[RMDB]
An RNA of 207 nucleotides, treated with DMS and 2A3 and read out base by base. Source: RMDB library RNAMAK, as collected in RNAgym. For DMS the reverse transcriptase was MarathonRT. In probing experiments dimethyl sulfate is read out at A N1 and C N3, which are open when not base-paired.
RNA sequence: GGGAACGACUCGAGUAGAGUCGAAAAGGGUUGGUAUUCGUACCAACCCAAAAACCGUAGGACGAUGCGAACGAACUACGAUCGGUCUUCGAAAGAGGACGCGAUCGCGGAGGUAUAUCGUCCUAAACGGAAAAACAGUCUGCUUCGGCAGACUGAAGUUAGUAAUGUAGUUCGCUACAUUACUAACAAAAGAAACAACAACAACAAC
Reactivity to DMS in 0.01 (KOAc 150mM, MgCl2 10mM, bicine 150mM(pH8.5), 24C), signal-to-noise 3, nucleotides 027 to 156: g000g010g050u000u000g000g000u010a030u000u000c300g020u000a000c010c010a010a040c000c000c020a000a000a020a030a030c010c000g050u000a030g000g020a020c000g000a030u000g000c060g030a090a110c080g000a150a230c000u000a010c000g010a030u010c000g020g000u000c000u010u010c000g010a200a140a280g010a030g020g000a000c000g030c000g020a010u000c000g010c020g000g010a080g020g000u010a100u000a090u000c000g030u000c000c000u000a000a010a080c020g000g010a060a060a060a100a160c000a030g020u000c000u000g010c000u000u000c300g030g030c000a020g000a020c010u010g000a020a100
Reactivity to 2A3 in 0.01 (KOAc 150mM, MgCl2 10mM, bicine 150mM(pH8.5), 24C), signal-to-noise 3, nucleotides 027 to 156: g000g010g000u020u010g010g010u020a030u030u080c080g000u010a000c000c010a000a000c000c000c000a000a000a000a020a000c000c000g020u010a010g000g010a000c000g000a000u020g050c040g080a090a010c020g020a060a040c040u060a020c070g000a000u000c000g000g010u000c010u010u000c010g060a090a060a040g000a000g020g010a020c100g010c000g280a000u000c000g010c010g000g040a190g010g060u080a090u040a010u200c000g000u030c000c000u000a020a030a000c000g020g020a130a080a010a010a010c000a000g000u010c000u000g020c000u050u080c250g120g000c000a000g000a000c000u000g000a000a000